[RMDB]
RNA sequence: GGGAACGACUCGAGUAGAGUCGAAAAAGAAUUGUACCACCACUGCGUAUCCUAAACGGGCUCUGCAGUGGUUAUUCUUGUAAAGUAAUAGGAGUGAAUAGUGGCCCGUAUUGCAGGCAUUAACAUUAAAAGGCAAUCCACUUCGGUGGAUUGCCAACCUGUAGUUAAAGUUCGCUUUAACUACAGGAAAAGAAACAACAACAACAAC
Reactivity to DMS in 0.01 (KOAc 150mM, MgCl2 10mM, bicine 150mM(pH8.5), 24C), signal-to-noise 3, nucleotides 027 to 156: a060g010a050a050u010u000g020u000a090c070c120a180c000c000a030c010u010g010c000g010u000a060u000c030c000u010a040a110a120c100g010g010g060c040u010c060u000g040c000a040g030u000g030g020u000u000a010u000u000c020u000u000g010u000a080a070a160g000u010a080a080u000a110g020g010a090g010u000g020a090a100u010a090g020u010g010g030c000c000c030g010u000a080u010u010g020c010a060g020g030c060a080u000u000a040a090c070a110u010u000a060a070a110a200g000g000c010a030a020u000c000c000a040c000u000u000c300g050g020u000g010g010a010u010u010g010c010c000a010a000
Reactivity to 2A3 in 0.01 (KOAc 150mM, MgCl2 10mM, bicine 150mM(pH8.5), 24C), signal-to-noise 3, nucleotides 027 to 156: a000g060a050a060u130u080g030u170a070c010c020a000c000c000a000c010u000g000c010g030u050a050u120c010c010u080a100a100a080c100g000g000g040c030u020c050u170g010c000a000g000u000g000g010u000u000a010u000u000c000u020u060g050u090a100a050a160g020u020a020a100u090a100g040g040a040g030u110g090a080a040u070a140g060u070g090g000c010c010c010g020u020a060u020u170g000c060a010g000g000c020a010u090u080a100a050c010a040u100u190a110a070a020a010g000g010c000a000a000u000c010c000a030c000u010u040c210g030g000u000g000g000a000u010u000g000c010c000a000a000
Source: RMDB library M2RFPK, as collected in RNAgym. Chemical mapping of a 207-nucleotide RNA with DMS and 2A3. For DMS, 5,178 sequencing reads were counted. For DMS the reverse transcriptase was MarathonRT.